[RMDB]
RNA sequence: GGGAACGACUCGAGUAGAGUCGAAAAAGAUCGAUUACGAUCGAUCAAUGAUGCCCCUCACCCACCUCUGAAGAUCCCAGGUGGGCGAGGGAACGGAGCACGGGAUCACGAGCUGUACGCUGCUCGAAAAAGAACUAGACCUUCGGGUCUAGUUCAAUCAGUAACCGAUCUUCGGAUCGGUUACUGAAAAAGAAACAACAACAACAAC
Reactivity to 2A3 in 0.01 (KOAc 150mM, MgCl2 10mM, bicine 150mM(pH8.5), 24C), signal-to-noise 1, nucleotides 027 to 156: a030g000a000u000c000g000a000u070u130a110c180g020a020u000c000g000a010u030c000a010a120u210g080a060u140g060c020c000c000c030u000c000a030c000c000c020a010c010c000u040c020u100g060a020a050g060a030u030c030c030c020a000g000g010u000g030g000g000c010g000a010g000g000g000a020a000c070g060g050a050g020c150a150c250g020g000g010a000u030c030a000c080g010a000g000c010u050g030u150a050c140g070c180u100g000c030u000c000g040a060a030a000a000a000g000a000a000c000u000a010g000a000c000c010u020u050c300g040g030g000u000c000u000a000g000u000u010c000a000a000
This 207-nucleotide RNA was probed chemically with 2A3. For 2A3, 652 sequencing reads were counted. Reactivities are given for positions 27 through 156.